[RMDB]
RNA sequence: GGGAACGACUCGAGUAGAGUCGAAAAACAUAAGCUGAUGCAAGCCAUUUAGUGUAUUCUGGAGAGGAACUGGCACAAGGGUGGGGCACUCAUCCUCUUAGGGCCGGGUGAGUAGUGUGAACCCGUGAAUGGCCCAGAGUGGACCAAGGAGCUAGAGCCUAUUGCAGAAAUUCGUUUCUGCAAUAGGAAAAGAAACAACAACAACAAC
Reactivity to 2A3 in 0.01 (KOAc 150mM, MgCl2 10mM, bicine 150mM(pH8.5), 24C), signal-to-noise 4, nucleotides 027 to 156: a000c050a060u210a080a030g020c030u050g080a060u100g050c050a060a040g010c010c020a070u100u150u150a090g010u040g030u060a160u110u060c040u060g040g020a090g000a020g060g020a060a030c040u030g030g000c050a010c030a090a040g050g010g020u100g060g050g020g000c020a010c030u020c010a080u080c010c020u030c030u090u120a090g030g020g000c010c020g010g000g000u010g010a030g010u110a060g010u040g020u030g120a030a050c010c010c000g000u020g070a080a110u110g010g000c000c000c000a010g000a000g010u040g010g000a020c030c020a050a050g010g010a030g030c020u060a030g010a020g050
Reactivity to DMS in 0.01 (KOAc 150mM, MgCl2 10mM, bicine 150mM(pH8.5), 24C), signal-to-noise 3, nucleotides 027 to 156: a080c060a100u010a090a110g010c040u000g010a070u000g030c010a130a110g010c050c020a110u000u000u000a090g030u000g000u010a090u010u000c090u010g020g000a130g010a130g000g010a070a070c050u000g020g020c060a090c050a070a070g000g030g030u000g010g040g000g030c040a090c040u010c030a060u000c010c000u000c030u000u010a110g020g000g060c070c030g050g030g020u020g020a080g030u010a100g020u010g030u010g000a090a080c010c010c020g010u020g010a030a110u010g020g000c010c010c020a080g010a090g030u010g010g020a030c000c030a050a120g010g000a070g010c040u000a120g000a260g000
Chemical mapping of a 207-nucleotide RNA with 2A3 and DMS.
The RNA was probed in 150 mM KOAc, 10 mM MgCl2 and 150 mM bicine (pH 8.5) at 24 C.
The 2A3 profile rests on 2,996 reads.